[RMDB]
RNA sequence: GGGAACGACUCGAGUAGAGUCGAAAAGAACUUUGGCCGGCUCGGAAUAGAAUCAGGGGGUGCAAACUGCCCACUGGCAGAAAGGAUUAUAGCAAAUGCGUACCCUAUUGCAAUACCGCCCGGCCAACAUAGACUACUCUAUUCGUAGAGUAGUCAAUCAUCUUCGGAUAUUCGUAUCCGAAGAUGAAAAAGAAACAACAACAACAAC
Reactivity to DMS in 0.01 (KOAc 150mM, MgCl2 10mM, bicine 150mM(pH8.5), 24C), signal-to-noise 1, nucleotides 027 to 156: g000a080a080c040u000u010u010g000g000c010c050g060g000c030u030c010g030g040a100a140u000a130g000a100a150u000c060a040g000g080g000g040g130u000g060c000a030a080a240c060u010g000c000c030c110a080c140u010g000g090c050a010g000a140a100a050g000g000a160u000u000a060u000a100g000c030a050a130a140u000g080c030g000u000a040c030c000c050u000a130u000u000g010c040a010a110u000a090c000c000g080c300c000c040g010g000c000c010a000a010c060a160u000a200g000a030c000u030a050c010u000c000u000a090u000u000c210g040u000a010g000a060g030u000a000g010u000c040a050a050
Reactivity to 2A3 in 0.01 (KOAc 150mM, MgCl2 10mM, bicine 150mM(pH8.5), 24C), signal-to-noise 3, nucleotides 027 to 156: g030a040a010c020u040u030u000g000g000c000c020g010g020c140u090c060g000g020a010a080u080a090g050a060a020u120c080a120g030g030g020g010g000u120g030c020a050a070a040c020u000g010c020c040c050a140c200u180g000g020c000a000g050a030a100a030g080g040a030u140u070a080u280a220g070c050a030a060a150u100g020c040g070u120a090c000c010c000u010a060u010u120g060c020a060a000u020a130c010c000g000c000c000c000g000g000c000c000a000a000c000a000u050a000g000a000c000u000a000c000u000c000u010a030u090u040c150g030u080a000g000a000g000u000a000g000u000c000a000a000